Structure probing data (2A3) for a 207-nucleotide construct.
RNA sequence: GGGAACGACUCGAGUAGAGUCGAAAAGGGGUCCUUUGAAGCUUCGUUCAAGGCUUGGAUUUAUGUGGCUGAAGCCUCCACGGCCACAUUGUCAGCCUUGACGAAGAUAAGAAGGACGGAGGCACCCAAAACGGUAACAUCUUCGGAUGUUACCGAAUCCGUUUUCAAACUUCGGUUUGAAAACGGAAAAAGAAACAACAACAACAAC
Reactivity to 2A3 in 0.01 (KOAc 150mM, MgCl2 10mM, bicine 150mM(pH8.5), 24C), signal-to-noise 1, nucleotides 027 to 156: g140g000g000g010u000c000c000u060u000u000g060a250a040g010c010u000u000c020g130u160u210c000a000a000g020g000c040u080u260g100g000a060u110u300u130a000u120g030u000g000g000c000u010g000a130a080g110c040c050u090c010c020a070c010g010g000c000c000a000c000a000u000u020g030u000c020a000g040c000c000u000u000g000a000c000g000a010a000g000a000u000a000a000g030a000a030g000g030a000c010g010g020a000g000g000c010a040c040c010c020a010a120a000a040c000g010g000u000a000a000c000a010u010c040u090u100c250g090g000a010u000g000u000u010a000c020c000g000a000a020
Source information: Source: RMDB library RNAMAK, as collected in RNAgym. The RNA was probed in 150 mM KOAc, 10 mM MgCl2 and 150 mM bicine (pH 8.5) at 24 C.